[RMDB]
RNA sequence: GGGAACGACUCGAGUAGAGUCGAAAAUUUACCUUCCUGGAUCUUUUUACUCCUCAUUAGGAAUUAUGCAGGUAAUGGAGGUGUACAGUAAUCUGGUGAGGAUGCCACUAUCUGCAAUCAGUGAAAUUGUAUUUAUUGAAUAGUUGGCCAGGCACGAAUGAGGCAUAAAUUUCGAUUUAUGCCUCAUAAAAGAAACAACAACAACAAC
Reactivity to 2A3 in 0.01 (KOAc 150mM, MgCl2 10mM, bicine 150mM(pH8.5), 24C), signal-to-noise 2, nucleotides 027 to 156: u110u050u050a130c010c000u050u100c010c000u010g200g000a300u100c150u030u280u090u050u060a070c020u040c000c000u050c060a130u070u180a070g000g160a110a060u160u080a060u100g040c050a000g190g000u070a070a020u060g150g050a020g000g060u050g010u000a040c000a000g060u120a040a090u050c020u040g020g020u080g050a020g030g010a010u040g040c020c060a060c030u080a010u050c020u000g070c010a000a120u050c060a040g050u050g160a000a000a240u080u100g030u040a080u040u160u040a070u020u050g050a230a060u050a020g030u040u160g000g000c070c020a040g000g050c050a000c020g060a090
Reactivity to DMS in 0.01 (KOAc 150mM, MgCl2 10mM, bicine 150mM(pH8.5), 24C), signal-to-noise 2, nucleotides 027 to 156: u000u010u010a150c030c040u000u010c050c000u000g000g020a060u000c010u000u010u000u030u010a110c050u000c030c010u010c090a150u000u000a090g000g000a080a080u010u010a070u010g010c070a030g000g010u000a030a080u000g010g020a030g030g010u000g010u000a040c070a130g010u010a060a170u000c000u000g030g030u000g000a110g020g010a090u000g030c040c050a070c060u000a080u000c050u000g010c050a120a060u000c080a100g000u000g000a080a050a080u000u020g010u010a080u010u010u010a080u020u000g000a080a110u000a090g030u000u020g020g000c010c070a060g000g020c070a050c060g010a090

Description: This 207-nucleotide RNA was probed chemically with 2A3 and DMS. The reactions ran in a buffer of 150 mM KOAc, 10 mM MgCl2 and 150 mM bicine (pH 8.5), at 24 C. For 2A3, 597 sequencing reads were counted. The DMS profile rests on 3,819 reads. Reactivities are given for positions 27 through 156. Source: RMDB library OK3TST, as collected in RNAgym.